[RMDB]
RNA sequence: GGGAACGACUCGAGUAGAGUCGAAAAGCGAUGAAUUCGCGCGUGUAUUUCGGAAGCUCGUCGAAGCUGCGCGCACAGAUCGUCAGCCGACGGUGCGCCCACGGAUCCGUGAGCUCGAUCAGCCGGACCAGCUGAUGGAGUUCGCUCCAUCAGCUGGAAAAGAAACAACAACAACAAC
Reactivity to 2A3 in 0.01 (KOAc 150mM, MgCl2 10mM, bicine 150mM(pH8.5), 24C), signal-to-noise 1, nucleotides 027 to 126: g000c000g030a030u090g240a020a260u170u040c000g000c010g010c030g020u130g030u110a270u040u030u040c060g000g040a110a030g030c010u010c080g130u000c010g040a090a020g060c070u030g000c030g000c000g030c060a000c000a100g210a190u100c030g050u060c010a000g100c050c080g000a000c050g020g000u050g000c020g040c050c000c000a030c020g080g040a150u050c000c000g050u050g030a030g000c010u000c030g060a080u050c000a030g040c020c040g030g020a050
Reactivity to DMS in 0.01 (KOAc 150mM, MgCl2 10mM, bicine 150mM(pH8.5), 24C), signal-to-noise 1, nucleotides 027 to 126: g010c000g010a050u000g040a060a150u000u000c100g030c030g000c130g030u000g010u000a020u010u000u010c060g010g010a150a140g020c020u000c060g010u000c020g020a100a070g000c050u010g020c100g040c030g080c030a080c120a090g010a090u000c010g010u010c060a080g020c080c060g000a040c000g020g000u000g020c100g000c070c100c090a080c040g060g000a070u000c030c010g010u010g010a060g040c030u000c070g020a060u000c120a090g000c040c030g000g000a200